[RMDB]
RNA sequence: GGGAACGACUCGAGUAGAGUCGAAAAUGGAUCGCGGAGACGUGCCCGCGGAGCGAGUUGAGCGAGAUCAGCGACCCGAGGUCUGGGCGCGGAGUGUCGACAGCGGAGCCAGGCGGUAGGACCGGGAUAACAUGAGACGAUUCGUCGUCUCAUGUUAAAAAGAAACAACAACAACAAC
Reactivity to DMS in 0.01 (KOAc 150mM, MgCl2 10mM, bicine 150mM(pH8.5), 24C), signal-to-noise 3, nucleotides 027 to 126: u000g000g000a070u010c010g000c010g010g020a140g000a080c070g020u010g010c060c010c030g020c040g000g000a110g020c020g000a150g010u000u000g010a130g010c050g020a080g000a110u010c040a100g000c030g000a150c080c000c010g010a150g010g000u020c080u000g010g000g000c020g000c030g000g010a080g010u000g000u000c040g000a090c070a060g010c050g010g000a160g010c040c060a110g000g000c070g000g010u000a050g000g010a190c010c010g020g010g000a160
Reactivity to 2A3 in 0.01 (KOAc 150mM, MgCl2 10mM, bicine 150mM(pH8.5), 24C), signal-to-noise 1, nucleotides 027 to 126: u110g030g030a070u080c020g000c030g030g050a070g030a050c060g020u080g040c020c000c040g050c040g020g010a040g030c060g010a050g060u060u100g050a050g030c060g020a050g040a200u050c030a010g010c000g070a230c030c000c020g030a070g040g060u070c110u130g000g000g000c020g000c020g000g000a060g040u120g000u020c010g030a030c010a020g010c020g020g000a000g100c030c000a040g060g000c020g020g050u080a030g050g050a040c020c010g040g030g000a040